This 177-nucleotide RNA was probed chemically with DMS and 2A3. For 2A3 the reverse transcriptase was SuperScript II with manganese. DMS adducts were read by reverse transcription with MarathonRT. Conditions: 150 mM KOAc, 10 mM MgCl2 and 150 mM bicine (pH 8.5), 24 C.
RNA sequence: GGGAACGACUCGAGUAGAGUCGAAAAAGAGGUCCUUACGAGGACCUCAAAUUCCCUAUGAUGGUAAUAACCAUGCUAAUACUGAUGUCUUGUGACUGAAUCAAAGUUAUGUGUCUGAGGGAAUUAAAUGCAAGUCAUUAUUCGUAAUGACUUGCAUAAAAGAAACAACAACAACAAC
Reactivity to DMS in 0.01 (KOAc 150mM, MgCl2 10mM, bicine 150mM(pH8.5), 24C), signal-to-noise 8, nucleotides 027 to 126: a140g000a010g000g020u000c000c000u000u010a100c190g020a040g000g000a010c000c000u000c000a010a040a090u000u000c000c000c000u000a040u010g020a010u000g000g010u010a300a120u010a270a080c020c010a020u000g020c080u010a090a070u020a130c060u000g010a090u000g000u010c020u010u010g010u010g000a030c020u010g010a120a080u020c150a050a080a070g010u000u010a030u010g010u000g000u000c020u000g000a150g000g000g010a060a060u010u020a040a110
Reactivity to 2A3 in 0.01 (KOAc 150mM, MgCl2 10mM, bicine 150mM(pH8.5), 24C), signal-to-noise 4, nucleotides 027 to 126: a000g030a020g020g000u000c010c000u030u010a060c280g100a020g000g000a010c000c000u000c000a000a000a000u010u000c000c000c000u010a020u080g060a030u020g000g000u050a080a090u110a200a190c010c010a010u050g070c050u050a080a090u050a170c030u050g030a020u040g040u070c010u110u120g030u070g030a020c010u040g100a040a090u180c050a100a060a020g010u020u030a040u120g120u010g020u000c020u020g050a040g000g000g020a060a030u140u070a150a130